[RMDB]
RNA sequence: GGGAACGACUCGAGUAGAGUCGAAAAGAAAGUGUGCACUUGAUACCGCGUGACUUCGGUCACGUAGUGGCAACGCGCAGGACUUUGCUGCCACUGCUUAGUCCUGAGGUAUCUUGUGCUCACGAAAGGUAAUCGGGACUUUCGAGUCCCGAUUACCAAAAGAAACAACAACAACAAC
Reactivity to 2A3 in 0.01 (KOAc 150mM, MgCl2 10mM, bicine 150mM(pH8.5), 24C), signal-to-noise 2, nucleotides 027 to 126: g130a040a080a010g000u010g010u000g000c000a010c000u000u010g000a000u000a000c000c010g010c020g010u000g020a000c020u030u080c300g080g000u010c000a000c000g000u000a010g000u000g050g080c140a130a040c030g040c010g020c000a000g000g000a000c000u010u000u010g020c020u070g150c020c050a110c040u040g000c010u000u000a000g000u000c000c010u030g000a020g010g000u000a000u000c000u000u000g010u000g000c000u000c000a000c000g010a060a040a000

Chemical mapping of a 177-nucleotide RNA with 2A3. The reactions ran in a buffer of 150 mM KOAc, 10 mM MgCl2 and 150 mM bicine (pH 8.5), at 24 C. The data come from the RNA Mapping Database (RMDB), library OK1LIB.